[RMDB]
RNA sequence: GGGAACGACUCGAGUAGAGUCGAAAAUAGCACUUUGGGAGGCCGAAGCAAGUGGAUCACCUGAGCUCAGGAGUUCAAGACCAGCCUGGGCAACAUGGUGAAACCUUGUCUCUACUAAAAAUACAGAACUAGAAGGAAGAUUCGUCUUCCUUCUAGUAAAAGAAACAACAACAACAAC
Reactivity to DMS in 0.01 (KOAc 150mM, MgCl2 10mM, bicine 150mM(pH8.5), 24C), signal-to-noise 6, nucleotides 027 to 126: u010a080g030c050a070c040u000u010u010g020g000g000a080g010g010c050c030g010a050a050g010c030a030a050g020u010g010g010a250u000c030a020c030c030u000g000a110g020c060u000c030a010g010g000a090g000u000u010c110a090a110g010a060c100c080a100g000c020c000u000g000g000g000c010a010a090c090a090u000g000g010u000g010a010a040a090c020c010u000u000g000u000c030u000c030u000a070c060u000a000a050a040a040a050u010a070c100a100g010a100
Reactivity to 2A3 in 0.01 (KOAc 150mM, MgCl2 10mM, bicine 150mM(pH8.5), 24C), signal-to-noise 4, nucleotides 027 to 126: u070a010g050c030a030c090u030u090u060g060g020g010a050g040g040c030c040g010a020a010g010c010a010a020g030u110g100g050a040u000c000a010c000c010u010g000a000g000c010u000c010a000g020g010a040g010u120u120c130a150a030g080a130c050c040a020g050c000c010u010g000g020g000c000a010a000c040a040u150g000g010u000g000a010a010a000c000c000u010u030g050u020c010u010c000u050a130c020u020a000a070a070a030a020u220a070c090a050g110a100